[RMDB]
RNA sequence: GGGAACGACUCGAGUAGAGUCGAAAAAGUGUAGAUGCCCGACUCGUACCCUGUAGCUCAGGUUUAACUACCGAUGUUCAAUUACGGGCAUUUGAUAUAUACAAUGCUAGUAUAGCUGGUAUUGGUCAUACGGUACAAUUUUCGAAUUGUACCGUAUAAAAGAAACAACAACAACAAC
Reactivity to 2A3 in 0.01 (KOAc 150mM, MgCl2 10mM, bicine 150mM(pH8.5), 24C), signal-to-noise 5, nucleotides 027 to 126: a000g110u120g030u050a050g010a090u020g010c000c020c010g030a040c020u040c060g030u080a130c010c000c030u050g110u180a010g030c030u040c140a040g040g000u050u050u030a080a070c120u030a020c020c010g030a050u070g040u040u080c040a080a070u180u060a170c030g000g010g000c000a000u020u020u070g010a010u020a010u010a000u000a130c010a020a010u010g000c010u010a010g020u050a130u140a300g120c010u000g000g010u020a010u010u020g030g000u060c030
Reactivity to DMS in 0.01 (KOAc 150mM, MgCl2 10mM, bicine 150mM(pH8.5), 24C), signal-to-noise 9, nucleotides 027 to 126: a110g010u000g010u010a060g010a040u000g010c010c010c010g010a120c100u000c060g010u000a110c050c040c030u010g010u010a070g010c070u010c180a190g020g010u000u000u010a100a120c160u000a030c030c020g000a090u010g010u000u010c100a080a090u010u010a100c050g010g000g010c000a010u000u000u000g010a090u010a080u010a130u010a120c010a010a010u000g000c000u000a030g010u000a140u010a130g010c010u000g010g000u000a010u000u000g010g010u000c150